The record gives the reactivity of an RNA of 177 nucleotides to DMS and 2A3. DMS adducts were read by reverse transcription with MarathonRT. It was measured as part of the RMDB library OK2TST. Values cover nucleotides 27 to 126. The 2A3 profile rests on 1,304 reads.
RNA sequence: GGGAACGACUCGAGUAGAGUCGAAAAGGCCUUCUCGAACCGGACAGAACGCCGCUCGACGUUUCUAGGUGGUCAGAUGACUACAACUCUCGUGACACUCCUGAGGCGAUUUGCGUCGGCUGACUACGUUCCAUGGUGCGUUCGCGCACCAUGGAACAAAAGAAACAACAACAACAAC
Reactivity to DMS in 0.01 (KOAc 150mM, MgCl2 10mM, bicine 150mM(pH8.5), 24C), signal-to-noise 1, nucleotides 027 to 126: g000g060c010c020u000u000c040u000c040g040a130a130c110c110g000g020a100c100a070g000a070a060c080g010c020c090g040c080u000c070g000a040c010g010u000u000u010c030u020a090g030g000u000g000g010u000c000a220g010a020u010g000a010c030u010a160c150a090a040c300u020c000u000c040g020u010g040a130c030a150c060u000c010c010u000g020a020g000g010c060g000a110u000u000u010g010c240g050u000c000g020g030c040u000g050a120c090u000a090c030
Reactivity to 2A3 in 0.01 (KOAc 150mM, MgCl2 10mM, bicine 150mM(pH8.5), 24C), signal-to-noise 1, nucleotides 027 to 126: g020g020c000c000u020u020c020u010c000g020a120a010c090c010g050g070a020c060a040g030a180a060c010g030c020c000g040c010u010c000g060a060c020g020u000u070u010c040u050a010g050g050u040g020g000u000c020a010g030a120u150g040a040c050u100a040c110a070a100c010u020c000u030c040g110u010g020a010c090a060c260u010c000c000u000g010a010g030g000c050g060a100u090u000u040g020c040g000u040c040g010g070c020u000g060a060c000u040a050c060